[RMDB]
RNA sequence: GGGAACGACUCGAGUAGAGUCGAAAAGUACAAUGUUUCGACAUUGUACGAUGGAGCCAAAGCCGAAAGGCAUUUUAAUCCUUGGCUGGCGAAUGCCUAAAAGAAGAAUCCAUUUCGAUGGAUUCAAUCACCCUAUUUAAUUCGUUAAAUAGGGUGAAAAAGAAACAACAACAACAAC
Reactivity to DMS in 0.01 (KOAc 150mM, MgCl2 10mM, bicine 150mM(pH8.5), 24C), signal-to-noise 9, nucleotides 027 to 126: g010u000a010c010a000a010u000g010u000u000u010c180g020a080c000a000u000u000g010u000a000c000g010a100u010g010g010a300g000c010c020a050a100a130g020c010c010g010a080a060a070g010g010c220a070u000u010u000u010a120a130u000c030c030u000u000g000g010c020u000g010g020c030g010a090a060u010g010c010c010u000a050a040a090a080g000a130a130g000a010a010u000c000c000a010u000u000u010c180g010a020u000g000g000a010u000u000c000a060a120
Reactivity to 2A3 in 0.01 (KOAc 150mM, MgCl2 10mM, bicine 150mM(pH8.5), 24C), signal-to-noise 4, nucleotides 027 to 126: g000u000a000c000a000a000u010g020u020u090u100c120g020a010c000a010u000u000g000u000a000c000g000a020u070g050g070a020g010c010c010a100a150a020g020c020c020g180a160a040a010g020g020c010a010u020u030u010u100a060a060u060c000c000u020u050g020g000c030u010g000g020c030g040a090a050u150g030c010c020u100a100a090a020a040g170a090a010g000a000a000u000c000c000a020u020u050u060c060g020a010u010g000g000a000u000u010c010a000a000